[RMDB]
RNA sequence: GGGAACGACUCGAGUAGAGUCGAAAAUCAGGAGUUCAAGACCAGCUUGGCCAACAUGGUGAAACUCCGUCUCUACUAAGAACACAAAAAAUUAGCUGGGUGUGGUGGCGCGUGCACACCUGUAGUCCCAGUACUCAGGAGGCCGAGGCAGGAGGAAAUAUUAAUUACGGUUCGCCGUAAUUAAUAUAAAAGAAACAACAACAACAAC
Reactivity to 2A3 in 0.01 (KOAc 150mM, MgCl2 10mM, bicine 150mM(pH8.5), 24C), signal-to-noise 3, nucleotides 027 to 156: u110c040a050g020g010a020g010u040u060c080a130a020g070a060c020c010a010g030c030u070u060g050g000c000c020a050a060c070a220u060g040g000u020g040a100a020a030c000u010c000c000g010u020c010u000c000u020a080c030u050a070a090g090a200a020c070a010c120a050a070a050a070a060a140u160u090a060g010c010u020g000g000g030u040g020u010g030g030u020g020g020c060g010c030g060u090g040c040a050c010a000c110c000u020g060u060a040g040u030c020c030c010a010g040u040a020c040u030c040a030g030g010a020g050g010c000c020g020a020g010g010c060a030g030g000a020g000g000a050a160
Reactivity to DMS in 0.01 (KOAc 150mM, MgCl2 10mM, bicine 150mM(pH8.5), 24C), signal-to-noise 3, nucleotides 027 to 156: u010c050a110g020g010a050g020u000u010c050a070a120g010a060c000c010a070g020c070u010u010g010g010c020c030a020a080c040a110u000g030g030u020g020a050a020a030c000u000c000c010g000u000c020u000c010u010a040c050u000a040a090g010a060a070c060a150c070a010a040a060a060a070a150u000u000a060g020c040u010g000g010g030u010g010u000g000g020u000g020g040c050g030c070g050u000g040c060a070c060a050c010c000u010g020u000a050g010u000c010c010c010a110g020u000a040c040u000c050a090g000g020a130g020g030c050c020g010a060g000g030c020a040g020g000a060g020g000a030a080